[RMDB]
RNA sequence: GGGAACGACUCGAGUAGAGUCGAAAAGACGUAAUCCGCGCAAAUCCACAAACGCCAACGAUGAGCGUUUCGCUGUAGCCGCUUAAGGCAACAGCCGGGGCCGCCUGAGCCCUCUUACCAAAGACGGGAAACUCGAUGCCAUUCGUGGCAUCGAGAAACUGGUAAGGACUUUCGAGUCCUUACCAGUAAAAGAAACAACAACAACAAC
Reactivity to 2A3 in 0.01 (KOAc 150mM, MgCl2 10mM, bicine 150mM(pH8.5), 24C), signal-to-noise 2, nucleotides 027 to 156: g020a010c040g020u080a080a110u060c040c000g000c000g010c050a000a000a220u110c020c010a130c070a060a030a010c060g020c030c000a120a050c120g100a220u100g040a050g020c030g000u020u030u070c040g000c010u010g020u020a040g000c000c000g090c170u220u270a160a110g000g020c000a000a020c000a000g010c010c050g000g000g000g000c000c060g030c000c070u090g010a060g020c000c020c010u000c010u070u090a040c030c070a040a000a020g040a030c020g000g000g060a040a070a050c000u000c000g000a000u010g000c000c000a040u060u080c100g090u080g000g000c000a000u000c000g000a000g010a000a000